[RMDB]
Notes
Chemical mapping of a 177-nucleotide RNA with 2A3 and DMS. The RNA was probed in 150 mM KOAc, 10 mM MgCl2 and 150 mM bicine (pH 8.5) at 24 C. For DMS, 6,366 sequencing reads were counted. The 2A3 profile rests on 5,285 reads.
RNA sequence: GGGAACGACUCGAGUAGAGUCGAAAAUGAGCACAAAGAGUAGCAUAAGCUCUCCUUUGACAUCUUCACCAACCUCUCAUCGUUCCCUUCUCUGUAAUAACGUCGUUUUGCAAAACUGCAAUGGUCCCAAAUACGGUAGGUUCGCCUACCGUAUUUGAAAAGAAACAACAACAACAAC
Reactivity to 2A3 in 0.01 (KOAc 150mM, MgCl2 10mM, bicine 150mM(pH8.5), 24C), signal-to-noise 4, nucleotides 027 to 126: u050g010a040g050c070a020c020a140a020a010g060a020g060u260a010g060c040a080u110a300a100g000c020u000c010u000c020c030u020u010u010g010a050c000a010u010c010u000u000c000a040c050c010a030a060c010c010u010c010u020c010a040u010c010g020u020u020c000c010c000u020u030c010u000c000u030g040u050a030a070u070a150a030c040g070u020c010g010u030u030u030u080g010c000a030a080a160a210c080u030g000c020a010a050u070g050g040u030c010c020
Reactivity to DMS in 0.01 (KOAc 150mM, MgCl2 10mM, bicine 150mM(pH8.5), 24C), signal-to-noise 5, nucleotides 027 to 126: u000g010a140g000c090a070c140a040a030a040g010a030g020u010a020g030c010a170u020a110a130g000c000u000c010u000c040c050u010u000u000g010a090c030a020u000c030u000u000c020a030c080c070a100a050c090c010u000c000u000c050a120u000c000g000u000u000c010c010c000u000u000c020u000c010u010g010u000a090a040u000a050a120c140g000u000c050g010u010u000u010u000g030c020a030a060a060a100c150u010g010c040a050a050u000g010g000u000c020c030